An RNA of 207 nucleotides, treated with 2A3 and read out base by base. It was measured as part of the RMDB library M2RFPK. For 2A3 the reverse transcriptase was SuperScript II with manganese.
[RMDB]
RNA sequence: GGGAACGACUCGAGUAGAGUCGAAAAAGAUCGAUUACGAUCGAUCAAUGAUGCCCCUCACCCACCUCUGAAGAUCCCAGGUGGACGAGGGAACGGAGCACGGGAUCACGAGCAGUACGCUGCUCGAAAAAGAACUAGACCUUCGGGUCUAGUUCAAGAACUUUGAAUGCUUCGGCAUUCAAAGUUCAAAAGAAACAACAACAACAAC
Reactivity to 2A3 in 0.01 (KOAc 150mM, MgCl2 10mM, bicine 150mM(pH8.5), 24C), signal-to-noise 1, nucleotides 027 to 156: a000g000a000u010c000g010a020u030u130a120c300g010a000u000c000g000a010u020c020a010a020u140g080a070u130g040c010c040c010c030u020c030a070c000c000c000a000c000c000u040c040u070g080a100a020g010a030u000c000c010c010a050g150g000u000g040g000a000c030g000a020g000g050g030a070a020c080g070g070a100g040c030a060c150g010g000g000a000u010c040a000c030g000a000g010c020a000g010u020a000c300g010c020u010g000c000u000c000g000a000a000a000a000a040g030a000a000c000u000a000g010a000c010c000u010u130c200g010g000g000u010c000u000a000g000u000u000c000a000a000